An RNA of 207 nucleotides, treated with DMS and 2A3 and read out base by base. Source: RMDB library OK3TST, as collected in RNAgym. For DMS the reverse transcriptase was MarathonRT. Reactivities are rounded to 0.1 and cut off at 0 and 3. For 2A3, 6,942 sequencing reads were counted. Reactivities are given for positions 27 through 156. For 2A3 the reverse transcriptase was SuperScript II with manganese.
RNA sequence: GGGAACGACUCGAGUAGAGUCGAAAAUAUGGCGACUUACAGGAACCUACGCAGCCGCCACAAAUAAUGAAUCAACUAAUGCAAAUUCGUCAAUUAGGUUUAUCGCCUAUGGAUUUAGCUAGUGCUUUAUUACAAUGGGCAGCCACCGGGUUAGGCAUAAGUGUGAAUUAUUCGUAAUUCACACUUAAAAAGAAACAACAACAACAAC
Reactivity to DMS in 0.01 (KOAc 150mM, MgCl2 10mM, bicine 150mM(pH8.5), 24C), signal-to-noise 5, nucleotides 027 to 156: u010a050u000g010g030c030g030a090c010u000u020a120c060a140g020g010a120a080c040c010u000a070c050g020c070a090g030c010c010g000c020c020a060c040a060a130a070u000a040a040u000g000a050a060u000c030a100a070c020u000a050a070u010g020c030a080a050a070u000u000c030g020u010c130a070a130u000u000a020g000g010u000u000u010a140u000c230g000c010c000u000a040u000g020g010a040u000u000u000a080g010c020u000a050g000u000g000c210u000u000u010a030u010u010a040c050a080a140u000g010g020g000c010a080g020c030c010a070c050c010g000g010g010u000u000a050g010g020c040a160
Reactivity to 2A3 in 0.01 (KOAc 150mM, MgCl2 10mM, bicine 150mM(pH8.5), 24C), signal-to-noise 7, nucleotides 027 to 156: u240a070u070g040g020c020g010a050c050u070u110a050c140a100g120g030a080a060c010c020u030a030c090g030c060a020g020c000c010g000c030c010a070c050a020a100a050u090a030a020u060g040a010a030u060c050a050a130c030u070a100a050u150g000c010a010a010a040u030u020c020g100u160c170a070a120u100u030a030g020g040u040u090u130a140u160c100g000c010c010u020a020u080g020g010a010u000u010u040a030g000c010u010a010g000u010g030c000u050u010u020a020u010u030a040c050a070a090u060g030g000g010c000a010g010c000c020a020c040c010g050g010g000u030u060a040g030g020c030a040